An RNA of 177 nucleotides, treated with DMS and 2A3 and read out base by base. For 2A3, 1,925 sequencing reads were counted. For DMS the reverse transcriptase was MarathonRT.
RNA sequence: GGGAACGACUCGAGUAGAGUCGAAAAUUAGCUUCUGAGCAGGUGCCCGGCACUGGAAGAGGAGAGCCCAAGAGAGCACGGAUACAUUGUGUGGCUGAAGGGGGCAAGGCCCUGGGCUGCCUCCUACGAAUUCAUAGCCAUUCGUGGCUAUGAAUUCAAAAGAAACAACAACAACAAC
Reactivity to DMS in 0.01 (KOAc 150mM, MgCl2 10mM, bicine 150mM(pH8.5), 24C), signal-to-noise 3, nucleotides 027 to 126: u000u000a110g010c030u000u000c040u010g000a150g010c050a100g000g020u010g000c020c070c070g010g030c070a050c070u000g010g000a100a080g000a060g000g000a090g020a080g000c060c030c040a050a100g000a130g010a170g010c040a030c090g000g010a130u000a080c170a090u000u000g020u000g020u000g000g020c040u010g020a140a090g020g000g010g000g020c050a060a090g000g020c010c020c060u010g010g000g030c060u000g000c060c020u000c010c020u000a070c210
Reactivity to 2A3 in 0.01 (KOAc 150mM, MgCl2 10mM, bicine 150mM(pH8.5), 24C), signal-to-noise 2, nucleotides 027 to 126: u050u030a000g020c010u070u070c040u140g090a040g050c080a010g090g010u020g030c050c040c050g100g000c070a030c070u080g000g070a100a020g030a040g120g020a040g000a030g040c030c010c010a040a010g120a010g000a000g000c030a010c040g070g020a090u130a140c030a130u070u180g030u020g010u010g130g000c030u020g000a070a130g010g000g000g000g030c010a010a060g080g010c000c010c040u030g030g050g010c010u000g010c000c000u000c000c010u030a030c070